[RMDB]
This 177-nucleotide RNA was probed chemically with 2A3. Reactivities are given for positions 27 through 126. Values are in units of 0.01, from 0 to 300, in steps of 10. It was measured as part of the RMDB library RFM100.
RNA sequence: GGGAACGACUCGAGUAGAGUCGAAAAGCUCGAGGGACAAGUCAAGGUACUAGCUAUUUCGUGAGUUCCUCGGGCAAAGGAAAAGACGUUCAAAACAAGUCACAGGGCAACAGAAAAUGGUAUUCUAACGAGAAACUUGGUUCGCCAAGUUUCUCGUAAAAGAAACAACAACAACAAC
Reactivity to 2A3 in 0.01 (KOAc 150mM, MgCl2 10mM, bicine 150mM(pH8.5), 24C), signal-to-noise 1, nucleotides 027 to 126: g010c000u000c000g000a010g000g000g000a000c010a000a020g000u090c000a040a010g030g050u010a100c100u000a110g210c120u020a080u010u060u150c100g000u060g100a080g000u000u020c000c000u000c020g000g030g000c000a000a020a000g000g000a000a030a030a020g000a020c010g030u060u090c050a010a070a070a070c000a000a090g000u000c000a000c000a160g060g020g000c000a040a050c000a130g110a070a070a090a060u050g010g030u000a160u090u000c000u000a000